[RMDB]
RNA sequence: GGGAACGACUCGAGUAGAGUCGAAAAAAAAGAUAUGGACGUAGAACUACUCCCGAUGUAGGCGAAGAACUAAUCUCGGAAACGAGAUUAGGGAGCCUAUGGAGGGAGCUACGUCCUAAGUCAAAAAGGAGUUUAAUUAGUUCGCUAAUUAAACUCCAAAAGAAACAACAACAACAAC
Reactivity to DMS in 0.01 (KOAc 150mM, MgCl2 10mM, bicine 150mM(pH8.5), 24C), signal-to-noise 2, nucleotides 027 to 126: a080a070a100a080g010a030u010a190u000g000g010a010c000g010u000a000g000a060a030c020u020a300c030u000c010c000c020g000a300u010g000u000a010g000g020c000g030a090a170g030a090a230c010u000a000a000u000c000u000c000g000g010a010a010a030c010g010a000g010a020u000u010a000g020g000g000a040g020c000c030u030a000u000g000g000a300g010g000g000a000g000c000u000a000c000g010u000c000c000u000a000a060g000u000c000a060a040a070a120a050
An RNA of 177 nucleotides, treated with DMS and read out base by base.
The RNA was probed in 150 mM KOAc, 10 mM MgCl2 and 150 mM bicine (pH 8.5) at 24 C.
Values cover nucleotides 27 to 126.
The DMS profile rests on 1,798 reads.